[RMDB]
RNA sequence: GGGAACGACUCGAGUAGAGUCGAAAAACGUGGGCACCUAUGUAGUCUUCGUCGGACUCGUCAGACACUGGAGGGUCCUGGCCCCAGGGCACUCGCUUUCCGUCGGCGGGGUCAGUCACCACGUAGCAUUGACAGUUGAUUUCGAUCAACUGUCAAUAAAAGAAACAACAACAACAAC
Reactivity to DMS in 0.01 (KOAc 150mM, MgCl2 10mM, bicine 150mM(pH8.5), 24C), signal-to-noise 6, nucleotides 027 to 126: a040c020g020u000g000g010g010c050a080c040c040u000a090u000g000u000a050g010u000c020u010u010c270g000u010c230g000g000a050c010u000c010g020u010c030a110g020a030c030a090c090u000g000g020a040g000g010g020u010c010c010u000g010g010c120c170c300c040a150g000g010g000c010a030c020u000c010g020c050u000u000u010c190c110g020u000c020g010g010c000g000g000g000g010u000c090a060g000u010c050a190c010c000a020c020g020u010a100g000c190
Reactivity to 2A3 in 0.01 (KOAc 150mM, MgCl2 10mM, bicine 150mM(pH8.5), 24C), signal-to-noise 4, nucleotides 027 to 126: a000c010g000u020g000g020g010c050a040c020c020u120a140u300g120u080a050g020u040c030u170u110c190g160u060c050g030g030a020c010u020c020g020u010c030a090g010a040c020a020c080u060g020g030a010g020g010g000u020c000c000u030g080g050c020c020c080c000a020g020g000g000c030a010c020u060c020g130c080u060u090u060c100c050g000u000c010g000g000c030g010g010g020g020u020c050a030g060u080c040a040c150c010a010c020g010u010a030g090c030
Chemical mapping of a 177-nucleotide RNA with DMS and 2A3. The DMS profile rests on 7,294 reads.